This 177-nucleotide RNA was probed chemically with 2A3. The 2A3 profile rests on 453 reads. The reactions ran in a buffer of 150 mM KOAc, 10 mM MgCl2 and 150 mM bicine (pH 8.5), at 24 C. As a SHAPE reagent, 2A3 marks flexible, mostly unpaired nucleotides at the ribose 2'-OH.
[RMDB]
RNA sequence: GGGAACGACUCGAGUAGAGUCGAAAAACGCCAGGUUACGACCUGGCGAUUGCAAUGAUUUGUACCGAUUCAUUGAUAGGUUAGAAGAUUGAUUUACUACUUUGAGUCGGUACGAAUCAUAUCAUAAGCUAGAAUCGAUCUUCGGAUCGAUUCUAGCAAAAGAAACAACAACAACAAC
Reactivity to 2A3 in 0.01 (KOAc 150mM, MgCl2 10mM, bicine 150mM(pH8.5), 24C), signal-to-noise 1, nucleotides 027 to 126: a000c000g000c000c000a000g000g030u250u240a000c110g100a060c160c000u000g040g000c000g000a000u120u000g030c110a080a090u000g000a000u010u010u010g000u000a000c000c000g010a000u070u060c000a000u000u010g230a300u150a040g090g060u110u120a040g000a150a050g080a300u030u230g000a070u080u120u180a000c000u040a040c000u000u040u050g000a000g020u000c000g000g070u000a000c000g000a000a010u000c000a000u000a000u000c000a060u080a090a020